This 207-nucleotide RNA was probed chemically with 2A3.
Source: RMDB library OK3TST, as collected in RNAgym.
For 2A3 the reverse transcriptase was SuperScript II with manganese.
RNA sequence: GGGAACGACUCGAGUAGAGUCGAAAAAACAAUCUUUGAAACUAAAUGAGCUGAAAAUACCUUUUAAAAAGAAGAAACACAUUUAGAUUCUGGUGCACAGCAAAUUCCCUGUGAAUAAAAGUUCCAAAUUUGUGAUUCUAUUUGCAUUUCCAUAAAAGAUACUCACUAGGUUCGCCUAGUGAGUAUCAAAAGAAACAACAACAACAAC
Reactivity to 2A3 in 0.01 (KOAc 150mM, MgCl2 10mM, bicine 150mM(pH8.5), 24C), signal-to-noise 1, nucleotides 027 to 156: a000a000c090a070a060u100c010u090u050u090g050a070a070a050c010u030a000a070a080u030g000a000g130c100u090g110a060a100a170a110u090a130c040c000u080u090u060u140a000a080a060a010a010g040a020a040g060a060a130a010c000a010c000a050u000u000u060a000g000a030u070u010c050u050g000g000u000g000c020a020c010a070g050c000a080a080a130u020u000c000c000c000u060g020u030g000a020a000u100a110a180a020a030g020u000u000c040c000a060a100a100u150u070u070g000u050g020a010u080u070c050u080a110u060u000u070g020c000a010u020u070u050c040c020a020u300a110a040a110a070